[RMDB]
RNA sequence: GGGAACGACUCGAGUAGAGUCGAAAAAGCUCGAUUACGAUCGAGCACGACCGGACCUCGACCGGCUCGUCUAUGUUGCCAAUCGACUCGGCGUGGCGUCGGUCGUGAGAUGGCGUACGCGCCAUCAACGCAUUACUUCAUUCGUGAAGUAAUGCGUAAAAGAAACAACAACAACAAC
Reactivity to DMS in 0.01 (KOAc 150mM, MgCl2 10mM, bicine 150mM(pH8.5), 24C), signal-to-noise 7, nucleotides 027 to 126: a080g010c000u000c010g010a010u000u020a100c180g020a120u000c000g010a020g000c000a000c010g010a010c000c000g010g010a070c010c000u000c010g010a140c010c000g010g010c200u000c000g010u000c120u030a070u020g000u020u030g010c120c060a100a190u010c020g010a010c020u000c010g000g000c010g000u000g000g000c070g030u010c000g010g000u000c000g000u010g010a080g010a010u000g010g000c010g010u020a110c200g020c020g010c000c000a000u000c000a160
Reactivity to 2A3 in 0.01 (KOAc 150mM, MgCl2 10mM, bicine 150mM(pH8.5), 24C), signal-to-noise 9, nucleotides 027 to 126: a000g020c000u000c000g000a020u040u090a090c210g060a020u010c000g000a000g000c000a000c000g000a000c000c000g020g020a030c010c000u060c050g130a270c110c000g020g000c060u050c030g040u000c040u060a190u180g260u200u300g170c080c010a040a050u070c020g010a010c010u010c040g000g010c010g000u030g010g010c230g080u040c010g020g010u000c000g000u010g000a090g000a000u000g000g000c010g000u040a040c220g000c010g000c050c000a010u010c010a000